[RMDB]
RNA sequence: GGGAACGACUCGAGUAGAGUCGAAAACGAACAGAGGCGCUUCGAGCGGUAGGAGUAAGGCCAUAGCGAUAGGAGGAGAUGCUAGGAGUAGGGGGAGACCGAAGCGAGGAGGAAAGCAAAGAAAGCAGAUAAUAUCAUGGUUCGCCAUGAUAUUAUCAAAAGAAACAACAACAACAAC
Reactivity to DMS in 0.01 (KOAc 150mM, MgCl2 10mM, bicine 150mM(pH8.5), 24C), signal-to-noise 4, nucleotides 027 to 126: c060g010a100a100c130a060g000a140g030g020c070g030c040u000u000c060g010a120g000c050g000g000u000a050g000g010a050g020u020a070a090g010g020c020c060a070u000a080g020c060g000a120u020a070g010g010a080g000g000a040g010a050u000g020c080u010a040g010g000a050g020u000a070g010g010g000g000g010a100g010a060c050c050g020a050a060g010c080g010a060g000g000a090g010g000a070a070a070g010c090a020a040a100g020a060a060a110g010c140a110
Reactivity to 2A3 in 0.01 (KOAc 150mM, MgCl2 10mM, bicine 150mM(pH8.5), 24C), signal-to-noise 3, nucleotides 027 to 126: c020g010a010a000c030a040g060a050g110g000c030g010c050u060u070c070g050a040g010c050g030g040u060a040g000g050a040g020u110a060a070g080g000c000c030a090u070a020g020c030g030a040u070a090g040g020a020g020g010a050g010a030u070g020c030u040a030g030g040a060g040u120a080g040g000g000g020g000a040g020a010c020c020g010a030a010g020c030g010a020g000g020a010g020g010a080a030a010g000c030a030a060a060g100a050a080a010g020c050a010
An RNA of 177 nucleotides, treated with DMS and 2A3 and read out base by base. For DMS, 3,723 sequencing reads were counted.